Structure probing data (2A3 and DMS) for a 177-nucleotide construct.
DMS (dimethyl sulfate) methylates the pairing face of unpaired adenines and cytosines.
DMS adducts were read by reverse transcription with MarathonRT.
Source: RMDB library TTRDES, as collected in RNAgym.
For 2A3 the reverse transcriptase was SuperScript II with manganese.
For DMS, 2,969 sequencing reads were counted.
Values are in units of 0.01, from 0 to 300, in steps of 10.
RNA sequence: GGGAACGACUCGAGUAGAGUCGAAAAGAUAUGGAAGCCUGUGUGGGAGAAGCUUCUCGGAAACGAGAAGGCUUCAUCGAUCACACAAGGGCUUCCUAAGUCAAAGUGAACUCUUCGGAGUUCACAAGUCAUACACUGAGUUCGCUCAGUGUAUGACAAAAGAAACAACAACAACAAC
Reactivity to 2A3 in 0.01 (KOAc 150mM, MgCl2 10mM, bicine 150mM(pH8.5), 24C), signal-to-noise 2, nucleotides 027 to 126: g010a030u060a020u130g000g010a010a000g020c020c050u030g060u010g010u010g020g130g010a150g000a020a010g000c010u020u000c010u010c000g020g020a090a030a010c010g000a010g000a040a020g150g060c000u000u000c000a050u200c000g050a060u060c000a000c000a010c040a110a190g120g000g000c000u010u000c000c010u000a040a020g010u000c060a160a080a060g010u000g010a000a010c000u000c000u120u110c300g140g000a000g000u020u000c000a000c000a000a010
Reactivity to DMS in 0.01 (KOAc 150mM, MgCl2 10mM, bicine 150mM(pH8.5), 24C), signal-to-noise 3, nucleotides 027 to 126: g020a030u000a300u000g010g000a030a000g000c000c000u000g020u000g020u010g000g000g020a090g000a010a000g000c000u000u000c000u020c000g030g000a100a090a140c000g000a010g010a010a030g020g030c000u000u000c010a150u000c140g000a130u000c010a040c000a000c010a070a190g030g010g020c000u000u000c010c000u000a030a060g000u010c020a150a130a230g000u000g000a000a020c010u000c000u000u010c200g020g000a030g010u000u000c000a010c000a040a100